[RMDB]
RNA sequence: GGGAACGACUCGAGUAGAGUCGAAAACGCGAUGGAUACGUCCAUCGCGAAUCCGUCCAAGCCGCGGACGUUAAACUGUGGCACGGUUGUGCCUAGGUGCAACCCUGCUAUCGAUGGCGGCACCCCUGCCCAAGCUACCGUCUACGGACGGUAGCAAUCAUGCCAUUUAGUUCGCUAAAUGGCAUGAAAAAGAAACAACAACAACAAC
Reactivity to 2A3 in 0.01 (KOAc 150mM, MgCl2 10mM, bicine 150mM(pH8.5), 24C), signal-to-noise 2, nucleotides 027 to 156: c020g020c000g000a010u000g000g010a010u020a050c190g140u010c000c000a000u000c000g000c000g010a000a000u040c070c000g000u040c010c000a050a030g000c000c000g020c000g000g000a000c020g000u010u040a040a040a040c070u080g000u020g030g000c010a000c010g010g000u010u000g000u000g040c010c010u070a170g020g120u010g010c000a000a000c000c000c000u010g010c000u030a040u190c050g100a100u150g030g000c000g000g000c010a080c010c020c000c030u060g030c030c050c000a060a020g000c000u010a010c000c000g000u000c000u020a060c260g080g000a000c000g000g010u000a000g000c000a000a000
The record gives the reactivity of an RNA of 207 nucleotides to 2A3. For 2A3 the reverse transcriptase was SuperScript II with manganese. The RNA was probed in 150 mM KOAc, 10 mM MgCl2 and 150 mM bicine (pH 8.5) at 24 C. The data come from the RNA Mapping Database (RMDB), library OK3TST.